[RMDB]
RNA sequence: GGGAACGACUCGAGUAGAGUCGAAAAAUAGGUGUCGAACCACUAAUCGGGACUCAUCUCGGCUUGACGUCACGCAGACGCAGAUAUUUGGCGCCGCGCCGCGUCUGGCGUUCCUUGAAGAAGGAUGAUCGAGCGUGACGCCGAUCUAGUGGAGGGCCCUACAGUCUCGUUUCGACGAGACUGUAGGAAAAGAAACAACAACAACAAC
Reactivity to 2A3 in 0.01 (KOAc 150mM, MgCl2 10mM, bicine 150mM(pH8.5), 24C), signal-to-noise 1, nucleotides 027 to 156: a000u140a030g070g000u050g000u010c080g010a120a000c010c000a000c000u000a000a000u010c030g000g010g120a170c030u000c110a060u040c080u000c010g140g000c090u020u090g030a020c000g010u020c040a000c020g000c060a010g000a060c000g000c000a010g080a220u230a120u190u190u170g060g010c000g000c080c080g080c030g070c110c060g020c000g000u000c030u030g050g020c000g060u010u000c000c000u010u040g060a040a030g070a000a000g060g010a000u050g070a150u100c020g000a030g020c120g000u040g000a030c040g000c030c000g000a000u000c060u090a000g000u000g020g000a050g010g030g030c010